[RMDB]
RNA sequence: GGGAACGACUCGAGUAGAGUCGAAAAGAGGACGCCAGCGGUCCGACUACUUCUGCCACGAAUACGACGACGUCGGCGGUCAGUGCGCCUUCUACUCCGGAGGUCGGCAGCGCCACACCUGGUUCGAUACCAUGAGAGUCUGCUACGGCGACGACGGCUCCCUUCACAUGUUCGCAUGUGAAGGGAGAAAAGAAACAACAACAACAAC
Reactivity to 2A3 in 0.01 (KOAc 150mM, MgCl2 10mM, bicine 150mM(pH8.5), 24C), signal-to-noise 1, nucleotides 027 to 156: g110a020g010g000a030c000g030c000c010a020g020c080g030g120u150c000c010g010a000c000u210a050c000u060u160c060u170g200c100c060a130c030g060a070a110u140a140c130g020a010c070g000a010c090g040u040c020g000g040c080g080g050u160c050a090g050u130g020c000g080c000c000u030u000c020u050a100c000u040c100c010g030g030a050g010g020u070c020g040g000c000a000g030c020g010c040c000a120c020a030c020c020u000g030g000u020u040c080g010a000u070a180c010c010a040u080g010a050g000a000g140u020c000u050g000c030u030a030c060g010g000c000g030a080c020g000a000c010g000g040